About this RNA
An RNA of 177 nucleotides, treated with DMS and 2A3 and read out base by base. DMS adducts were read by reverse transcription with MarathonRT. It was measured as part of the RMDB library OK1LIB. For 2A3 the reverse transcriptase was SuperScript II with manganese. For DMS, 2,005 sequencing reads were counted. Values cover nucleotides 27 to 126. The reactions ran in a buffer of 150 mM KOAc, 10 mM MgCl2 and 150 mM bicine (pH 8.5), at 24 C.
[RMDB]
RNA sequence: GGGAACGACUCGAGUAGAGUCGAAAAGCUGCGGUACCGGGUGGCGCACGGCCCGGGGGUCGCGCUGGCCAAACUUCGGCUGCCGUCGCCGAGCGGUCGCGCCGGCAUCGCGGUCCACGCCGCGCUGCGCUUACAAAUGCUUCGGCAUUUGUAAGCGAAAAGAAACAACAACAACAAC
Reactivity to DMS in 0.01 (KOAc 150mM, MgCl2 10mM, bicine 150mM(pH8.5), 24C), signal-to-noise 1, nucleotides 027 to 126: g000c000u060g090c000g000g040u030a230c000c000g010g030g000u050g010g050c040g000c090a030c000g000g000c000c000c020g000g000g020g060g000u010c010g000c190g020c060u020g040g030c060c030a070a080a120c100u000u030c000g000g000c100u010g020c020c030g010u000c010g020c020c010g000a140g000c080g020g050u010c080g020c280g000c030c130g010g000c010a080u000c060g020c000g020g000u000c080c070a220c140g000c000c000g000c040g010c000u000g000
Reactivity to 2A3 in 0.01 (KOAc 150mM, MgCl2 10mM, bicine 150mM(pH8.5), 24C), signal-to-noise 3, nucleotides 027 to 126: g030c030u050g000c010g010g010u020a040c010c000g010g050g030u050g050g080c030g010c030a030c050g070g000c000c000c000g010g000g000g010g000u060c020g010c030g010c090u060g010g030c000c010a120a090a060c110u170u100c090g000g020c010u070g040c030c020g050u060c040g030c070c000g010a050g010c070g010g020u060c040g010c040g030c050c000g020g000c020a060u080c050g000c010g030g010u030c040c010a060c070g030c020c000g000c010g010c030u040g000